[RMDB]
RNA sequence: GGGAACGACUCGAGUAGAGUCGAAAACCCUCACUCUUCGGAGUGAGGGAAAUCUGAUUCCCAAUAGCUGGGUAUCCGGGCUAUGACGGAUAGGCGUUGCCAAAAGAUCUGGCUUCGGCCAGAUCAACAAAUACUGCUUGUUCGCAAGCAGUAUUUGAAAAGAAACAACAACAACAAC
Reactivity to DMS in 0.01 (KOAc 150mM, MgCl2 10mM, bicine 150mM(pH8.5), 24C), signal-to-noise 7, nucleotides 027 to 126: c000c000c000u010c000a010c000u000c000u000u010c180g020g010a020g010u000g000a010g010g010g000a000a010a040u000c090u000g010a260u000u000c000c000c020a180a080u010a030g020c010u000g010g000g020u010a080u000c020c020g010g000g010c030u000a030u010g000a120c140g000g000a040u000a070g000g010c050g020u000u000g000c020c020a090a080a110a120g000a010u000c000u000g000g000c000u000u010c160g030g000c000c000a000g000a010u000c000a080a120
Reactivity to 2A3 in 0.01 (KOAc 150mM, MgCl2 10mM, bicine 150mM(pH8.5), 24C), signal-to-noise 3, nucleotides 027 to 126: c000c000c000u010c000a010c000u010c010u040u070c270g160g010a000g000u000g000a010g000g000g000a060a030a010u070c060u070g040a140u030u060c010c010c000a000a060u090a040g010c010u030g060g050g110u160a090u060c020c010g060g040g000c090u150a150u240g090a030c030g000g020a040u020a050g030g010c070g180u160u210g060c020c010a000a100a030a040g010a010u000c000u010g000g000c000u030u040c230g050g000c000c000a000g000a010u010c000a000a000
Chemical mapping of a 177-nucleotide RNA with DMS and 2A3. The RNA was probed in 150 mM KOAc, 10 mM MgCl2 and 150 mM bicine (pH 8.5) at 24 C. The data come from the RNA Mapping Database (RMDB), library M2PK50.